Chemical mapping of a 207-nucleotide RNA with DMS and 2A3.
2A3 adducts were read by reverse transcription with SuperScript II with manganese.
[RMDB]
RNA sequence: GGGAACGACUCGAGUAGAGUCGAAAAGGUCUCGUUAGGCGGCGGCGAUGAAGGUAUUGUUUCUGACGAGAUGCCUGAUUCGGACGCGGCAGACCGCGCGCAGGUACGGUCGCUAGUGAUGUUGCACGACGCACGCAAGAUUUCCGACUACGGGUACCAUUGUACCCCGAUUCGUCGGGGUACAAUGAAAAGAAACAACAACAACAAC
Reactivity to DMS in 0.01 (KOAc 150mM, MgCl2 10mM, bicine 150mM(pH8.5), 24C), signal-to-noise 2, nucleotides 027 to 156: g020g010u000c000u000c030g050u010u000a100g020g020c010g010g030c050g040g020c010g010a030u000g010a300a020g010g010u000a040u000u000g020u000u010u000c020u000g010a170c210g000a110g010a100u000g020c010c000u000g030a300u000u010c060g030g040a110c050g010c040g010g000c050a080g000a070c010c010g010c040g050c020g000c210a050g030g010u000a020c010g000g040u000c020g020c030u000a090g030u010g020a120u000g010u000u000g060c020a120c020g010a060c000g000c010a130c070g000c030a070a120g020a190u000u000u000c070c000g000a110c020u000a090c060g000g020g010u000a080c070
Reactivity to 2A3 in 0.01 (KOAc 150mM, MgCl2 10mM, bicine 150mM(pH8.5), 24C), signal-to-noise 1, nucleotides 027 to 156: g060g000u030c030u010c070g050u100u080a090g040g040c010g010g020c030g000g030c010g030a010u020g010a060a010g060g030u060a040u070u100g120u020u180u060c130u150g100a080c090g050a050g020a130u050g020c020c000u030g000a060u000u020c000g010g010a040c020g000c000g020g000c030a010g000a040c000c030g020c000g000c010g040c100a060g000g080u120a040c040g000g030u020c000g000c030u020a000g020u010g080a100u050g060u090u070g050c060a020c060g080a010c070g030c030a040c010g010c000a070a000g010a140u070u180u000c010c000g020a010c040u110a080c080g050g030g000u040a050c020